An RNA of 177 nucleotides, treated with 2A3 and DMS and read out base by base. For 2A3, 727 sequencing reads were counted. Source: RMDB library OK1LIB, as collected in RNAgym.

RNA sequence: GGGAACGACUCGAGUAGAGUCGAAAAGAAAGGCGAAGGAAGGAUACGUGAGCCGAAGAACGUAGAGAUGAGGAAACUCAGCGAGAAAAAUCGAUCAGAAAAGAAGAAUUCUUCCUGAGAGAGAAGAGGGUUUACAAAAGUUCGCUUUUGUAAACCCAAAAGAAACAACAACAACAAC
Reactivity to 2A3 in 0.01 (KOAc 150mM, MgCl2 10mM, bicine 150mM(pH8.5), 24C), signal-to-noise 2, nucleotides 027 to 126: g110a020a090a030g070g030c020g020a060a040g090g000a000a000g040g090a040u050a130c040g020u130g050a000g020c050c070g050a020a010g050a020a000c000g030u080a010g010a000g000a280u080g000a030g000g050a040a020a020c000u010c000a000g000c010g000a040g050a070a000a000a000a000u020c040g090a030u010c050a080g100a150a250a090a000g000a020a040g050a050a080u020u050c000u060u000c000c020u010g000a000g010a000g000a000g000a170a000g040a090
Reactivity to DMS in 0.01 (KOAc 150mM, MgCl2 10mM, bicine 150mM(pH8.5), 24C), signal-to-noise 2, nucleotides 027 to 126: g000a060a090a130g020g010c040g040a000a000g000g040a040a090g000g000a050u000a110c010g000u030g000a070g020c050c040g010a130a060g010a190a110c040g040u040a070g010a200g000a040u000g000a070g030g040a080a140a200c040u000c000a040g000c190g060a060g030a000a100a000a160a100u050c010g000a130u030c030a060g020a060a090a070a070g000a100a080g010a110a140u000u000c000u000u000c200c010u020g000a070g000a180g000a090g010a020a070g000a160
Conditions: 150 mM KOAc, 10 mM MgCl2 and 150 mM bicine (pH 8.5), 24 C. 2A3 adducts were read by reverse transcription with SuperScript II with manganese.